[RMDB]
Description
Structure probing data (2A3 and DMS) for a 207-nucleotide construct. For 2A3, 762 sequencing reads were counted. Values cover nucleotides 27 to 156. 2A3 adducts were read by reverse transcription with SuperScript II with manganese.
RNA sequence: GGGAACGACUCGAGUAGAGUCGAAAAACCUUAUUUUGAGAAGCUGAGGGAUUUGGCCCAUAGAAGCUUCAGCAACCGUCUUUAAAUAGCACGGUGCUAAUACCAACGAGCAACUCGAAUGAUAAGUAAAACGUUGACAAGUUCGCUUGUCAACGAAUCUCUUAUAGUGGUUCGCCACUAUAAGAGAAAAAGAAACAACAACAACAAC
Reactivity to 2A3 in 0.01 (KOAc 150mM, MgCl2 10mM, bicine 150mM(pH8.5), 24C), signal-to-noise 2, nucleotides 027 to 156: a000c100c000u160u110a300u070u100u190u140g110a040g000a000a010g000c020u020g000a020g070g000g000a000u020u030u020g020g010c010c000c000a070u130a140g000a010a000g000c000u000u020c000a000g000c000a090a240c000c000g040u000c010u050u300u220a300a300a300u080a060g020c090a020c030g000g020u000g000c000u010a000a060u010a090c000c000a010a120c060g060a010g110c110a110a140c080u020c030g090a110a100u180g070a030u060a150a030g020u060a050a080a040a010c000g000u000u000g010a000c000a010a010g010u050u090c120g030c130u040u000g000u010c000a000a000c000g000a000a000
Reactivity to DMS in 0.01 (KOAc 150mM, MgCl2 10mM, bicine 150mM(pH8.5), 24C), signal-to-noise 1, nucleotides 027 to 156: a170c050c020u000u000a120u030u000u010u020g010a130g000a060a270g030c110u000g060a120g010g000g020a090u020u000u000g000g000c000c000c000a150u000a170g000a140a110g000c000u000u000c050a040g000c000a000a060c030c010g010u000c000u000u000u000a070a100a110u010a060g040c130a010c030g080g000u000g000c010u000a020a080u000a050c020c010a100a090c050g010a100g060c020a130a170c060u000c000g000a090a060u000g000a080u030a050a110g000u000a090a040a060a180c040g030u000u000g000a000c000a020a020g030u000u010c300g010c000u000u010g010u010c000a010a010c000g000a030a070